[RMDB]
RNA sequence: GGGAACGACUCGAGUAGAGUCGAAAAACUCAUCGUUUGUUAAAUGGGAAUAGUAGAGGCAGCGCAUCUUGUUUAUAAUACUAUAUGGAACAUGGAAAAAGUGAAUCUUAUCUGGGGGGUGGAGCGAACCCUUUUCGGUAUUCGUACCGAAAAGGGUAAAAGAAACAACAACAACAAC
Reactivity to DMS in 0.01 (KOAc 150mM, MgCl2 10mM, bicine 150mM(pH8.5), 24C), signal-to-noise 3, nucleotides 027 to 126: a110c020u000c050a100u040c140g030u080u030u030g000u010u010a030a110a060u010g030g000g010a090a030u020a050g020u030a050g000a050g010g030c010a060g020c060g010c070a080u000c030u010u000g000u000u000u000a020u030a100a120u030a060c130u010a060u000a040u000g000g010a020a030c070a040u000g010g010a050a050a040a080a070g010u000g020a080a060u020c040u000u010a080u000c080u030g040g020g000g030g000g030u000g000g000a020g020c090g000a080